[RMDB]
RNA sequence: GGGAACGACUCGAGUAGAGUCGAAAAGAUAUGGAUUGUAGUGGGAGCUGAAUUCGGAAACGAACAGCAUCGAUCACUCACAAUCCUAAGUCAAACAUUCGCAGGGACUUCGGUCCCUGCGAAUGAACCAACUAUCCUUCUUCGGAAGGAUAGUUGGAAAAGAAACAACAACAACAAC
Reactivity to DMS in 0.01 (KOAc 150mM, MgCl2 10mM, bicine 150mM(pH8.5), 24C), signal-to-noise 2, nucleotides 027 to 126: g000a010u000a300u010g010g000a000u000u010g010u000a060g010u010g010g020g000a070g030c000u000g020a110a180u000u000c020g000g000a150a040a200c010g020a000a140c000a000g010c000a210u000c130g010a060u010c020a020c000u010c190a000c000a000a000u000c000c000u000a000a090g020u000c010a130a090a240c000a010u000u000c000g000c030a000g010g000g000a020c000u000u010c170g000g030u010c000c000c010u000g010c000g000a020a000u000g020a130a170
Reactivity to 2A3 in 0.01 (KOAc 150mM, MgCl2 10mM, bicine 150mM(pH8.5), 24C), signal-to-noise 2, nucleotides 027 to 126: g060a060u090a040u200g000g000a000u030u010g010u000a000g020u020g020g140g010a010g000c030u040g080a190a300u090u000c000g000g030a100a020a000c000g000a000a010c010a010g000c010a060u210c060g070a110u030c010a000c000u040c020a010c000a010a010u030c010c000u010a060a020g090u000c010a080a050a120c000a030u020u000c010g000c000a000g000g000g030a010c010u070u280c300g090g000u020c000c060c000u010g020c010g010a020a000u000g010a000a000